RNA sequence: GGGAACGACUCGAGUAGAGUCGAAAAGAUAUGGAACAGGGACAUGCUUGGUACUCGGAAACGAGUGAGAGAGCAACAGCCCUAUUCCUAAGUCAAAGGGACAACUUAGUUCGCUAAGUUGUCCCAACCAACUAAUUGUCUUCGGACAAUUAGUUGGAAAAGAAACAACAACAACAAC
Reactivity to 2A3 in 0.01 (KOAc 150mM, MgCl2 10mM, bicine 150mM(pH8.5), 24C), signal-to-noise 3, nucleotides 027 to 126: g010a010u060a050u160g000g000a020a000c010a020g000g000g090a030c070a170u080g020c020u030u050g060g040u160a020c010u000c000g000g020a060a090a040c010g000a000g010u060g020a160g010a000g000a000g040c030a030a040c040a060g030c000c000c000u000a000u010u000c000c000u010a130a030g080u040c050a070a060a200g000g000g010a000c000a000a000c000u000u000a000g020u060u090c280g040c260u010a000a000g000u010u000g000u010c000c000c000a000a000
Reactivity to DMS in 0.01 (KOAc 150mM, MgCl2 10mM, bicine 150mM(pH8.5), 24C), signal-to-noise 5, nucleotides 027 to 126: g000a050u010a300u010g010g000a010a000c030a010g010g010g010a060c080a150u000g020c010u000u010g020g030u010a020c010u000c000g000g000a080a140a200c000g020a010g010u000g010a060g030a300g000a030g020c010a020a080c290a120g000c000c010c000u000a060u000u000c000c000u000a070a120g000u000c060a040a100a130g000g000g000a010c010a000a010c000u010u000a000g010u000u000c240g030c000u000a000a010g000u000u000g000u000c000c000c000a010a030